The data come from the RNA Mapping Database (RMDB), library TTRINS. This 177-nucleotide RNA was probed chemically with 2A3 and DMS. 2A3 adducts were read by reverse transcription with SuperScript II with manganese. The RNA was probed in 150 mM KOAc, 10 mM MgCl2 and 150 mM bicine (pH 8.5) at 24 C.
RNA sequence: GGGAACGACUCGAGUAGAGUCGAAAAGAUAUGGACUAUCCUACCCACCUAAUGUCUGACGUUGAAAAGCUUACUUCGGAAACGAAGUAAGCUUGGAGUCAGAUGUUAGAGGGAUAGUCCUAAGUCAUCAACUUUUUAAGUUCGCUUAAAAAGUUGAAAAAGAAACAACAACAACAAC
Reactivity to 2A3 in 0.01 (KOAc 150mM, MgCl2 10mM, bicine 150mM(pH8.5), 24C), signal-to-noise 2, nucleotides 027 to 126: g080a030u250a180u300g010g020a000c000u000a010u010c000c050u120a300c090c020c000a020c000c000u000a030a010u010g000u020c000u010g030a000c000g280u300u140g090a110a060a000a000g000c010u000u000a000c000u000u040c000g000g060a090a070a080c010g000a000a000g010u020a010a000g000c000u000u000g000g020a010g000u000c000a000g010a000u000g000u000u000a000g000a020g010g000g010a010u000a000g000u000c010c000u000a010a020g020u030c040a050
Reactivity to DMS in 0.01 (KOAc 150mM, MgCl2 10mM, bicine 150mM(pH8.5), 24C), signal-to-noise 4, nucleotides 027 to 126: g000a130u000a110u010g010g010a010c020u000a000u000c000c000u000a170c050c020c080a300c070c000u000a000a000u010g000u000c000u010g000a020c000g010u000u000g000a130a200a010a000g010c000u000u000a000c000u010u000c000g000g000a130a050a200c010g010a020a010g000u000a000a000g010c000u000u000g000g000a070g010u000c000a010g010a000u000g010u010u010a000g010a100g010g000g000a000u000a000g000u000c000c000u000a010a080g000u010c190a140